Structure probing data (DMS and 2A3) for a 207-nucleotide construct. For DMS the reverse transcriptase was MarathonRT. The reactions ran in a buffer of 150 mM KOAc, 10 mM MgCl2 and 150 mM bicine (pH 8.5), at 24 C.
RNA sequence: GGGAACGACUCGAGUAGAGUCGAAAACUCGCGCGAACAUUGAGGCGUGGAGCGCGACAUGAAUCAGCCUCUAUUAGAUUAAUGGUCGACAGAUCAGCGGCGAUCAGCGACCGAAUUAGAAGCCGCCACCGGAAGAGGAGACGCUCGACGGACGUCAAUAGGUAUAUAGUUUCGACUAUAUACCUAUAAAAGAAACAACAACAACAAC
Reactivity to DMS in 0.01 (KOAc 150mM, MgCl2 10mM, bicine 150mM(pH8.5), 24C), signal-to-noise 2, nucleotides 027 to 156: c020u000c000g040c020g050c020g000a130a160c100a160u010u040g020a080g020g010c000g000u000g020g000a300g020c010g000c020g010a040c090a140u010g010a110a170u020c080a140g000c020c020u060c030u020a140u010u000a170g010a150u020u010a050a120u000g010g010u000c000g020a090c100a120g010a090u020c060a120g010c060g000g000c000g020a040u000c020a150g000c070g000a060c010c000g010a070a070u000u020a180g040a100a090g000c020c020g040c010c050a150c030c040g000g020a080a130g000a150g010g010a230g000a010c000g030c020u010c010g000a140c050g000g000a020c030g030u010c030a140
Reactivity to 2A3 in 0.01 (KOAc 150mM, MgCl2 10mM, bicine 150mM(pH8.5), 24C), signal-to-noise 3, nucleotides 027 to 156: c000u000c000g000c010g000c030g100a270a050c020a030u030u100g010a030g000g020c020g000u010g010g020a080g010c010g000c020g030a020c040a180u250g090a100a080u160c030a090g010c010c010u000c020u090a140u040u160a070g060a080u090u200a100a120u250g010g000u020c000g010a060c060a100g020a000u020c020a020g010c030g060g000c020g000a010u010c050a020g000c000g000a000c000c000g000a020a020u080u020a070g060a180a010g000c000c000g040c000c010a010c010c060g030g000a060a050g000a050g070g030a070g000a030c020g040c060u020c050g070a030c000g020g020a100c020g040u010c010a060